[RMDB]
RNA sequence: GGGAACGACUCGAGUAGAGUCGAAAAGAUAUGGAGAUCCCAGGACAUGCUUGCAGGUCGGAAACGACCUGGAGCAACAGCCUGAGGAUCUCCUAAGUCAAAACCCUAUUCGUUCGCGAAUAGGGAAUCGAGUAAGAGUGUUCGCACUCUUACUCGAAAAAGAAACAACAACAACAAC
Reactivity to 2A3 in 0.01 (KOAc 150mM, MgCl2 10mM, bicine 150mM(pH8.5), 24C), signal-to-noise 2, nucleotides 027 to 126: g020a010u010a020u100g000g000a000g000a000u010c000c010c010a020g000g000a060c120a180u260g040c050u160u300g300c000a050g000g000u020c000g000g000a070a020a000c010g000a010c010c000u000g010g000a010g040c010a030a010c150a060g040c000c000u030g020a260g000g000a000u000c000u010c000c000u000a010a000g010u020c000a040a080a080a160c010c000c000u000a000u000u000c030g050u000u080c300g010c010g180a010a000u000a010g020g000g020a000a140
Reactivity to DMS in 0.01 (KOAc 150mM, MgCl2 10mM, bicine 150mM(pH8.5), 24C), signal-to-noise 2, nucleotides 027 to 126: g000a020u000a220u000g020g000a030g000a000u000c000c000c000a030g010g020a030c100a080u010g010c000u010u000g020c000a000g010g010u000c010g010g020a060a050a160c000g020a010c000c000u000g010g000a000g000c010a050a030c220a160g000c010c000u000g000a150g010g000a010u000c000u000c000c000u000a000a070g000u010c020a120a090a140a160c010c010c000u000a000u000u000c000g040u010u020c300g020c010g020a030a000u010a010g000g020g000a010a020